[RMDB]
RNA sequence: GGGAACGACUCGAGUAGAGUCGAAAAACUCGGCGUACGCGCCGAGACUCUUCCUGCCUCUCACUAGCUUCAUCCCUUCGAACCCGAAGGUACUAAGGUAAGGAACUAUUGGGAAGCAGGAACAGAAGAAUUCAAAAGGGUUCGCCCUUUUGAAUUCAAAAGAAACAACAACAACAAC
Reactivity to DMS in 0.01 (KOAc 150mM, MgCl2 10mM, bicine 150mM(pH8.5), 24C), signal-to-noise 3, nucleotides 027 to 126: a110c000u020c000g030g000c000g010u010a090c240g010c040g040c010c000g000a000g010a080c060u000c070u010u020c000c000u000g040c000c010u000c000u000c010a010c100u000a010g000c100u010u010c000a140u030c260c000c000u000u000c080g010a120a050c070c050c270g040a100a150g000g010u000a030c040u010a040a020g000g030u030a120a140g000g010a030a050c010u020a020u000u000g000g000g000a030a060g000c000a000g010g000a000a000c160a040g010a140a120
Reactivity to 2A3 in 0.01 (KOAc 150mM, MgCl2 10mM, bicine 150mM(pH8.5), 24C), signal-to-noise 7, nucleotides 027 to 126: a000c000u000c010g000g010c010g020u050a040c230g010c000g020c110c000g000a000g000a000c000u010c000u010u000c000c000u000g000c000c000u000c000u000c000a010c020u010a010g040c050u010u010c010a110u110c020c000c020u010u020c050g080a150a120c040c060c040g140a190a050g010g000u040a030c020u040a030a040g040g020u030a050a100g040g000a020a010c000u000a000u000u020g000g000g000a000a010g000c000a000g000g000a000a020c030a000g080a120a020